[RMDB]
RNA sequence: GGGAACGACUCGAGUAGAGUCGAAAACAUACUGGUUGCAACGAGCACAAGGAACCAACAAUGGUAUUUGUUGGAGAAAUGAGUUAUUUGUUACAGUAGCUGAUAACACACAUAAUACAAACUUUAACACGACCAGCAUAUUCGUAUGCUGGUCGUGAAAAGAAACAACAACAACAAC
Reactivity to DMS in 0.01 (KOAc 150mM, MgCl2 10mM, bicine 150mM(pH8.5), 24C), signal-to-noise 2, nucleotides 027 to 126: c070a110u000a020c080u010g010g030u020u000g050c000a020a060c080g000a060g010c030a070c040a010a080g020g000a300a230c000c020a030a000c020a000a010u010g000g110u000a090u000u000u000g000u000u010g000g000a010g000a110a160a060u000g010a090g020u000u000a030u000u000u010g020u000u000a100c030a020g000u000a040g000c080u000g000a090u000a050a100c040a090c110a040c080a080u010a030a120u000a180c180a070a080a080c230u000u000u010a090a110
Reactivity to 2A3 in 0.01 (KOAc 150mM, MgCl2 10mM, bicine 150mM(pH8.5), 24C), signal-to-noise 1, nucleotides 027 to 126: c030a030u030a070c010u040g170g020u150u040g000c030a040a050c110g030a020g040c030a000c020a000a050g040g010a080a000c000c040a010a010c000a000a060u080g270g000u210a190u140u040u010g010u000u000g000g020a000g090a000a060a040u030g030a010g000u010u090a050u080u110u020g030u040u100a020c020a070g050u070a030g000c060u130g050a110u130a220a050c070a000c010a000c000a060u130a240a030u210a210c080a030a150a030c030u190u000u000a070a040